[RMDB]
RNA sequence: GGGAACGACUCGAGUAGAGUCGAAAAUAAGUGGUGGGCUCAUCAAGCAGUAAAUACGGCGUUUGCUGCGCGAGUGCCAUGGCAACCCAAACCCGCUGACGCUGACCGCCGGAAAGCUGAUCCACAACGAUUUUAGUACUUUCGAGUACUAAAAUCGAAAAGAAACAACAACAACAAC
Reactivity to DMS in 0.01 (KOAc 150mM, MgCl2 10mM, bicine 150mM(pH8.5), 24C), signal-to-noise 5, nucleotides 027 to 126: u000a110a100g020u000g010g040u000g010g020g010c020u000c040a140u000c110a080a240g000c010a020g020u000a020a020a050u010a130c070g000g000c070g000u000u000u000g000c020u000g010c030g010c280g000a030g020u010g000c030c030a050u010g010g010c080a070a110c030c010c020a070a090a160c040c030c020g030c060u000g010a100c100g000c020u000g010a100c100c030g000c030c040g000g000a070a110a090g010c030u000g000a120u000c030c050a070c160a080a210
Reactivity to 2A3 in 0.01 (KOAc 150mM, MgCl2 10mM, bicine 150mM(pH8.5), 24C), signal-to-noise 3, nucleotides 027 to 126: u150a050a020g040u030g040g020u030g020g050g010c010u020c030a100u040c050a110a030g000c020a000g010u040a020a030a020u080a080c080g050g000c030g070u010u020u020g000c010u010g000c010g010c030g010a000g040u070g130c010c000a000u020g040g000c010a050a100c010c010c010a020a030a080c010c010c010g010c060u050g030a020c030g000c050u020g040a080c020c030g010c000c010g060g020a060a020a010g000c030u060g030a070u030c040c030a060c030a140a080